[RMDB]
RNA sequence: GGGAACGACUCGAGUAGAGUCGAAAACGUGACCAUCGUGGAAUUCCUUCCGCGGGCGCUGCCCAACGAGGACGCCGAUGUGUCCAAGGAGAUCGAGAAGCAGUUCAAAAAGCUGGGUGUCACGAUCAGUGGCACUACUGUUCGCAGUAGUGCCACUAAAAGAAACAACAACAACAAC
Reactivity to DMS in 0.01 (KOAc 150mM, MgCl2 10mM, bicine 150mM(pH8.5), 24C), signal-to-noise 4, nucleotides 027 to 126: c130g000u000g030a000c000c000a010u000c000g030u020g010g020a160a130u010u000c020c020u010u000c020c040g010c300g010g000g000c000g000c220u020g000c000c000c000a050a300c220g020a020g020g000a030c300g000c030c050g000a040u000g010u010g010u000c000c080a110a120g010g000a140g000a020u020c010g000a070g020a040a130g010c000a010g010u000u010c070a100a130a070a160a090g000c000u000g000g010g000u010g010u000c020a110c010g010a020u000c040
Reactivity to 2A3 in 0.01 (KOAc 150mM, MgCl2 10mM, bicine 150mM(pH8.5), 24C), signal-to-noise 3, nucleotides 027 to 126: c030g070u100g020a020c000c000a000u020c010g010u080g080g140a130a170u100u060c020c000u190u150c020c000g000c000g010g010g010c260g230c250u300g000c000c000c020a010a000c000g010a020g000g010a020c040g020c020c010g010a010u050g100u060g020u000c000c010a000a040g080g020a080g010a020u040c030g000a010g010a100a010g050c000a020g020u080u110c150a110a100a020a030a040g020c020u040g000g090g100u120g060u110c040a030c020g020a020u020c020